This 207-nucleotide RNA was probed chemically with 2A3 and DMS. Conditions: 150 mM KOAc, 10 mM MgCl2 and 150 mM bicine (pH 8.5), 24 C. For DMS, 11,117 sequencing reads were counted. For 2A3 the reverse transcriptase was SuperScript II with manganese. DMS (dimethyl sulfate) methylates the pairing face of unpaired adenines and cytosines. For 2A3, 6,731 sequencing reads were counted. The data come from the RNA Mapping Database (RMDB), library OK3TST.
[RMDB]
RNA sequence: GGGAACGACUCGAGUAGAGUCGAAAAGAUGAUGUGCUUGUGGCUUAUACUUAGAUCACAUGCUGCACCCUAGGAGUGGUGAUCAGUCCCACCUAAGCCAAAGGGACUGAGUGGCUCCCCAUAAGGGAAUAGGUGAGGGAAAGGAGGAUAGCAAUUACUGCUAAACUUAAUUCGUUAAGUUUAGCAGAAAAGAAACAACAACAACAAC
Reactivity to 2A3 in 0.01 (KOAc 150mM, MgCl2 10mM, bicine 150mM(pH8.5), 24C), signal-to-noise 4, nucleotides 027 to 156: g070a040u130g010a030u070g030u030g020c040u050u040g020u020g040g000c030u100u080a080u050a190c070u160u120a050g050a120u100c040a010c010a050u060g020c030u050g020c030a070c010c000c010u010a040g020g010a040g030u080g030g030u080g060a050u000c000a000g010u000c000c010c000a060c010c050u070a100a050g060c030c010a060a040a030g000g000g000a000c010u010g010a000g020u030g020g000c000u020c000c000c010c000a050u100a110a080g030g000g010a010a060u070a110g030g030u060g030a070g000g010g000a030a050a030g030g000a010g020g010a040u050a030g030c030a020a060u110u060a110
Reactivity to DMS in 0.01 (KOAc 150mM, MgCl2 10mM, bicine 150mM(pH8.5), 24C), signal-to-noise 4, nucleotides 027 to 156: g010a110u010g010a060u000g020u000g010c030u010u000g030u010g010g010c020u000u000a110u000a090c150u000u000a070g020a090u010c040a030c020a050u000g020c040u000g020c010a090c010c010c000u000a130g020g020a090g030u010g020g010u000g020a080u000c020a020g010u000c000c010c010a150c130c060u010a070a130g020c090c070a050a130a160g010g010g010a030c010u010g010a030g000u000g020g010c020u000c000c000c010c040a130u000a090a090g000g020g010a090a100u000a040g010g020u000g000a100g000g010g010a040a080a070g010g000a060g010g020a110u010a090g000c080a070a090u000u000a150